[RMDB]
RNA sequence: GGGAACGACUCGAGUAGAGUCGAAAACAAUAGGAGACCCAUGGAGAGUCUCCAGAGGUUCCUAAGGCCUCGAUCGCGCCUGCCGGGAGAAAAGCAGAAUGUCCUGGUUCUCCAAAUAAGACGUCAAACUAAUUAUCCAGUUCGCUGGAUAAUUAGUAAAAGAAACAACAACAACAAC
Reactivity to DMS in 0.01 (KOAc 150mM, MgCl2 10mM, bicine 150mM(pH8.5), 24C), signal-to-noise 4, nucleotides 027 to 126: c080a080a130u030a160g010g000a020g000a020c000c010c070a170u020g010g010a120g000a090g010u010c010u000c000c010a040g000a150g010g010u000u010c020c060u020a120a120g010g010c000c030u000c060g000a070u010c070g010c150g000c030c020u000g010c060c040g000g000g010a070g000a060a040a110a110g000c130a060g010a120a100u030g000u000c070c000u010g020g000u010u000c000u020c010c030a040a060a070u050a080a060g000a070c070g000u010c140a090a070
Reactivity to 2A3 in 0.01 (KOAc 150mM, MgCl2 10mM, bicine 150mM(pH8.5), 24C), signal-to-noise 7, nucleotides 027 to 126: c030a020a120u120a190g010g010a020g010a010c010c020c060a050u110g030g030a100g000a020g040u010c000u000c000c000a000g010a010g010g020u060u080c030c010u080a080a040g060g020c010c010u030c040g040a080u080c030g010c020g020c040c000u020g020c000c010g020g020g020a040g050a040a110a020a000g070c070a020g040a210a070u120g040u080c000c000u020g020g000u000u010c010u000c000c000a040a080a040u170a050a020g060a040c060g040u080c050a040a110

This 177-nucleotide RNA was probed chemically with DMS and 2A3.
Reactivities are rounded to 0.1 and cut off at 0 and 3.
Values cover nucleotides 27 to 126.
For 2A3, 9,047 sequencing reads were counted.
High DMS reactivity at an A or C suggests that its Watson-Crick edge is free.
Source: RMDB library OK1LIB, as collected in RNAgym.